[RMDB]
RNA sequence: GGGAACGACUCGAGUAGAGUCGAAAAGCGGACGCGGGGACGCGCUUUCCCCCAGACCCAUGGACAGGUGGGCCGCAGCCUCCUUCGCGGCCGGCGGGGCGGCGGCGCCAAGCAGAGCGACGUAGCGUCCUACCGCAGUGUUCGCACUGCGGUAGGAAAAAGAAACAACAACAACAAC
Reactivity to DMS in 0.01 (KOAc 150mM, MgCl2 10mM, bicine 150mM(pH8.5), 24C), signal-to-noise 2, nucleotides 027 to 126: g050c050g000g010a050c030g040c040g000g000g000g000a020c130g020c060g000c120u020u020u000c010c000c020c060c120a080g010a100c030c020c030a090u010g000g010a080c140a040g010g030u020g000g000g000c020c050g000c010a050g000c030c050u000c010c040u000u040c000g000c060g000g000c010c050g000g010c150g010g010g020g020c080g020g020c000g000g030c020g020c050c010a040a120g010c060a080g000a100g000c050g000a020c100g000u010a090g010c100g000
Reactivity to 2A3 in 0.01 (KOAc 150mM, MgCl2 10mM, bicine 150mM(pH8.5), 24C), signal-to-noise 3, nucleotides 027 to 126: g070c040g020g050a040c040g010c040g050g000g020g020a010c000g030c000g020c070u020u010u010c000c000c000c000c010a050g020a150c050c000c000a050u140g060g050a030c060a090g140g000u070g010g080g000c010c000g050c000a020g000c000c010u060c030c020u130u130c090g020c040g030g070c020c010g010g020c060g020g020g000g000c030g020g010c010g020g020c020g020c030c010a060a020g030c040a000g030a010g050c020g040a050c040g040u080a030g030c000g040
This 177-nucleotide RNA was probed chemically with DMS and 2A3. It was measured as part of the RMDB library OK1LIB. The reactions ran in a buffer of 150 mM KOAc, 10 mM MgCl2 and 150 mM bicine (pH 8.5), at 24 C. The 2A3 profile rests on 2,864 reads. For DMS the reverse transcriptase was MarathonRT.